Description: Chemical mapping of a 177-nucleotide RNA with DMS and 2A3.
[RMDB]
RNA sequence: GGGAACGACUCGAGUAGAGUCGAAAAGAAGAGAAUAAGCGCGGAUAUUUCUGUCGGUAGAGCAGCAGGACCGACACCUGCGAGUAGAGGGAUCAAGACCCUGUUCGCGCAAAGAUUGAAGUAGAAGCGAUAUGCACCAUUUCGAUGGUGCAUAUCGAAAAGAAACAACAACAACAAC
Reactivity to DMS in 0.01 (KOAc 150mM, MgCl2 10mM, bicine 150mM(pH8.5), 24C), signal-to-noise 3, nucleotides 027 to 126: g010a090a090g010a100g000a140a050u010a080a150g000c000g000c010g000g020a080u010a040u010u020u020c050u010g010u000c000g010g000u030a030g030a160g000c040a090g010c000a060g000g000a130c020c020g010a060c030a030c050c020u010g020c070g000a080g010u020a140g010a100g020g000g000a060u020c290a120a150g000a050c010c010c000u000g010u010u000c000g010c020g000c000a090a060a120g020a070u010u000g000a050a260g000u020a020g000a130a130g010
Reactivity to 2A3 in 0.01 (KOAc 150mM, MgCl2 10mM, bicine 150mM(pH8.5), 24C), signal-to-noise 4, nucleotides 027 to 126: g060a000a030g090a000g040a040a130u160a240a060g010c000g000c000g020g010a010u000a030u030u240u010c040u040g030u050c010g070g080u110a080g010a030g060c050a010g050c020a000g060g070a130c020c020g000a000c010a020c010c000u050g040c060g000a000g000u060a000g040a070g040g050g020a080u160c080a120a010g030a040c000c000c010u000g030u020u000c010g000c000g000c000a010a010a010g070a060u060u160g050a070a020g020u120a020g030a100a020g060
The 2A3 profile rests on 2,247 reads. It was measured as part of the RMDB library OK1LIB. Values cover nucleotides 27 to 126.